Structure probing data (2A3 and DMS) for a 177-nucleotide construct. The DMS profile rests on 908 reads. Conditions: 150 mM KOAc, 10 mM MgCl2 and 150 mM bicine (pH 8.5), 24 C. 2A3 is a SHAPE reagent: it acylates the 2'-hydroxyl of flexible nucleotides of all four kinds. The data come from the RNA Mapping Database (RMDB), library TTRDEL.
RNA sequence: GGGAACGACUCGAGUAGAGUCGAAAAGAUAUGGAGAUGGAACUACAGCGUAAGAGGAGCUCGGAAACGAGCUCUACCCACCUGAACGCUGCCAUCUCCUAAGUCGUCAGCUUACUUCGGUAAGCAAGUAUGCAUUCUCCUUCGGGAGAAUGCAUACAAAAGAAACAACAACAACAAC
Reactivity to 2A3 in 0.01 (KOAc 150mM, MgCl2 10mM, bicine 150mM(pH8.5), 24C), signal-to-noise 1, nucleotides 027 to 126: g000a020u030a010u050g020g000a010g000a000u000g030g000a110a060c110u240a020c300a020g000c000g000u100a110a050g070a150g190g000a000g010c000u000c000g000g000a010a020a000c010g010a000g000c000u000c000u000a000c000c010c020a290c020c070u130g090a140a020c040g000c010u000g000c020c000a000u000c000u010c010c000u010a010a010g000u000c040g030u050c070a030g030c000u000u010a000c000u040u040c210g140g000u000a000a000g000c000a020a010
Reactivity to DMS in 0.01 (KOAc 150mM, MgCl2 10mM, bicine 150mM(pH8.5), 24C), signal-to-noise 1, nucleotides 027 to 126: g030a040u000a090u030g000g000a020g010a020u000g000g000a110a020c040u010a300c010a010g010c000g070u010a150a020g020a150g030g000a010g010c000u000c010g000g000a040a060a040c000g010a000g020c010u000c010u000a000c090c070c060a200c130c130u060g000a180a020c000g020c010u010g000c000c000a010u000c000u000c050c000u000a000a040g010u000c010g010u040c220a130g010c010u000u010a010c000u000u030c160g010g010u000a000a000g010c000a030a060